RNA sequence: GGGAACGACUCGAGUAGAGUCGAAAAGUUUGAGGUUGAGCUUGCUCCCUCACUAAUAUACCAUACUAUAUUCCUACGCCUGGAUCAUAUAGGACCUCAUGGACCUGUUGGUUUCAGGCCAAACCAUCCAUAAAGUUAAAUUCGUUUAACUUUAUGGAAAAGAAACAACAACAACAAC
Reactivity to 2A3 in 0.01 (KOAc 150mM, MgCl2 10mM, bicine 150mM(pH8.5), 24C), signal-to-noise 9, nucleotides 027 to 126: g060u070u110u120g030a030g020g030u160u210g030a010g010c060u090u110g040c000u050c000c000c000u010c000a010c010u060a070a130u130a020u040a120c040c080a080u070a120c060u060a040u040a070u140u060c010c010u040a070c070g000c000c000u010g010g000a010u010c010a010u020a010u020a270g020g020a080c000c020u200c170a200u300g020g010a070c000c000u010g010u010u010g020g020u010u040u210c010a000g010g000c000c000a000a000a000c000c010a040u000
Reactivity to DMS in 0.01 (KOAc 150mM, MgCl2 10mM, bicine 150mM(pH8.5), 24C), signal-to-noise 6, nucleotides 027 to 126: g000u000u000u010g010a030g010g010u020u020g020a030g030c050u010u010g020c020u000c010c010c020u010c020a030c080u010a060a070u020a060u000a060c140c100a130u020a120c240u000a040u000a090u010u000c010c010u010a090c250g000c010c010u000g010g010a020u000c010a020u030a040u000a010g000g010a140c010c010u020c240a170u030g040g010a050c000c000u010g010u000u010g000g010u000u000u010c010a010g000g010c010c300a020a030a050c140c120a130u020